The data come from the RNA Mapping Database (RMDB), library OK1LIB. Chemical mapping of a 177-nucleotide RNA with 2A3 and DMS.
RNA sequence: GGGAACGACUCGAGUAGAGUCGAAAACUUCAGUAUCGCACGGUUGCCCCCGUGAGAGAAGGCUGCGACGGAUUGCCCUAUUAGCUUAAUCUGAGUGUUGGUUGCGCGUUGAGAGUAUCACCAUCGGCUAAAUAUAUUUAUUCGUAAAUAUAUUUAGAAAAGAAACAACAACAACAAC
Reactivity to 2A3 in 0.01 (KOAc 150mM, MgCl2 10mM, bicine 150mM(pH8.5), 24C), signal-to-noise 1, nucleotides 027 to 126: c010u130u070c020a020g020u040a030u150c020g000c010a000c020g060g020u290u170g130c020c000c050c000c010g050u040g000a060g020a000g040a110a080g080g010c040u050g000c020g020a010c010g030g090a090u010u090g040c010c000c000u020a070u100u040a040g040c000u000u060a090a060u070c010u020g040a020g020u070g020u140u040g040g000u050u080g030c010g010c020g020u000u090g000a020g020a000g000u040a040u050c030a010c040c000a050u020c010g010g000
Reactivity to DMS in 0.01 (KOAc 150mM, MgCl2 10mM, bicine 150mM(pH8.5), 24C), signal-to-noise 4, nucleotides 027 to 126: c050u010u010c050a100g010u020a080u010c040g000c010a060c010g010g020u010u020g020c070c030c070c010c010g020u020g000a080g010a100g010a100a110g010g010c030u010g010c030g010a000c040g000g000a140u010u010g000c000c030c040u010a080u020u010a110g020c030u020u020a050a090u040c060u010g010a010g000u010g000u000u010g010g010u010u010g010c050g000c060g020u010u020g000a080g000a060g000u010a040u010c050a040c040c040a060u000c040g000g010
For DMS, 8,933 sequencing reads were counted.
For 2A3, 521 sequencing reads were counted.